[RMDB]
RNA sequence: GGGAACGACUCGAGUAGAGUCGAAAAUUAUUGAGCGUAGAUGUCUCUGUCACGAUACGAGUAAGUGACUCUCGUGUACUACUGGCGAAUGAGACAGAGACAUUAUAUGCUCGUCCCAGUCAAUAAACUCUAUUGCGUCAUUCGUGACGCAAUAGAGAAAAGAAACAACAACAACAAC
Reactivity to 2A3 in 0.01 (KOAc 150mM, MgCl2 10mM, bicine 150mM(pH8.5), 24C), signal-to-noise 2, nucleotides 027 to 126: u220u140a080u100u180g010a010g020c010g010u010a000g000a020u000g000u030c000u010c000u050g000u000c010a000c100g020a000u060a120c030g000a030g000u060a140a140g000u080g300a100c000u010c010u010c070g150u120g040u060a050c020u020a000c010u070g210g020c030g110a070a070u180g030a040g000a080c000a000g000a000g000a000c000a000u000u000a010u000a000u040g000c000u020c010g000u000c010c000c000a000g080u080c060a010a160u100a170a100a060
Reactivity to DMS in 0.01 (KOAc 150mM, MgCl2 10mM, bicine 150mM(pH8.5), 24C), signal-to-noise 2, nucleotides 027 to 126: u030u020a090u000u010g000a010g010c000g030u000a010g000a020u000g010u010c000u000c000u000g020u000c000a120c060g020a110u000a040c010g010a020g000u000a020a100g010u010g020a050c060u010c140u000c190g000u020g020u000a020c030u000a020c020u000g000g000c040g020a150a070u000g010a130g010a020c000a010g010a020g010a000c000a010u000u000a040u000a020u000g020c010u000c000g010u000c010c010c000a100g000u010c160a040a060u010a090a130a120
Chemical mapping of a 177-nucleotide RNA with 2A3 and DMS. The 2A3 profile rests on 1,925 reads. Reactivities are rounded to 0.1 and cut off at 0 and 3.